Background:
Chemical mapping of a 207-nucleotide RNA with 2A3.
[RMDB]
RNA sequence: GGGAACGACUCGAGUAGAGUCGAAAAUUGGAACGGACACGUGCGAUGUCCAUCUUCUUGAUGACGUCCUCUGCGCGACACGGCGGAACAACGUUGUACGCGGAGCAGACGGUGACCGGAAGCAGACGGCCUUGUGUCAUGUAUACGUACGCUCGAAGACAGCACCUCAAUUCGUUGAGGUGCUGUCAAAAGAAACAACAACAACAAC
Reactivity to 2A3 in 0.01 (KOAc 150mM, MgCl2 10mM, bicine 150mM(pH8.5), 24C), signal-to-noise 2, nucleotides 027 to 156: u160u040g030g000a100a050c070g080g000a000c000a000c030g090u140g110c040g060a110u080g000u000c060c000a110u060c010u120u000c000u060u120g060a100u060g050a020c000g000u000c010c000u000c010u030g050c040g000c030g070a030c010a000c090g070g000c030g090g110a230a060c140a080a060c060g080u140u080g010u030a040c020g030c020g020g030a050g030c070a020g000a000c010g030g000u020g020a040c020c030g000g010a000a000g010c040a000g010a050c010g010g030c010c000u080u130g030u000g010u090c060a060u040g000u070a070u030a060c120g020u030a000c070g000c060u090c040g080a120a000
The reactions ran in a buffer of 150 mM KOAc, 10 mM MgCl2 and 150 mM bicine (pH 8.5), at 24 C. Reactivities are given for positions 27 through 156. The 2A3 profile rests on 1,045 reads.